An RNA of 207 nucleotides, treated with DMS and 2A3 and read out base by base. For 2A3, 2,090 sequencing reads were counted. The RNA was probed in 150 mM KOAc, 10 mM MgCl2 and 150 mM bicine (pH 8.5) at 24 C.
RNA sequence: GGGAACGACUCGAGUAGAGUCGAAAACAGGAAACUGGUUAAUCGUUUUCCUUGGUAGUAUAGCGGAAACCAUAAAUAAGAAGAACUCUCAGUGCUUGAGUAGAGUUAAAAUAAUUAGACAGGCAAUUAAGGUACUCCACGUUCGCGUGGAGUACAACUAAACUUUAAACUUCGGUUUAAAGUUUAGAAAAGAAACAACAACAACAAC
Reactivity to DMS in 0.01 (KOAc 150mM, MgCl2 10mM, bicine 150mM(pH8.5), 24C), signal-to-noise 1, nucleotides 027 to 156: c030a120g010g000a070a080a100c060u000g030g020u000u000a110a100u000c000g030u000u000u000u000c030c000u010u030g000g050u000a060g000u000a150u000a060g020c010g020g010a070a150a040c010c000a100u000a100a070a110u000a060a120g000a170a160g010a080a050c020u000c000u000c050a200g020u000g000c050u010u020g010a160g010u000a030g000a110g020u000u000a040a050a130a090u000a020a030u000u000a010g000a110c030a060g000g030c030a020a130u000u010a070a150g020g000u000a000c000u000c030c010a000c000g020u010u030c270g020c080g100u000g010g010a040g010u010a010c010a020a100
Reactivity to 2A3 in 0.01 (KOAc 150mM, MgCl2 10mM, bicine 150mM(pH8.5), 24C), signal-to-noise 3, nucleotides 027 to 156: c020a010g040g080a050a030a020c060u150g050g060u180u150a130a110u200c030g000u020u030u040u090c020c020u020u040g080g000u010a060g010u040a040u070a100g060c070g020g050a050a040a040c020c000a020u120a130a110a010u160a090a030g090a040a010g040a050a010c000u000c000u010c020a030g050u070g170c020u080u040g010a020g010u080a010g030a000g010u040u060a020a070a030a050u100a020a030u130u010a060g030a060c010a020g000g060c010a020a030u090u120a200a030g080g000u000a000c000u010c000c000a010c000g020u050u050c170g030c010g090u000g000g010a000g000u000a000c000a000a000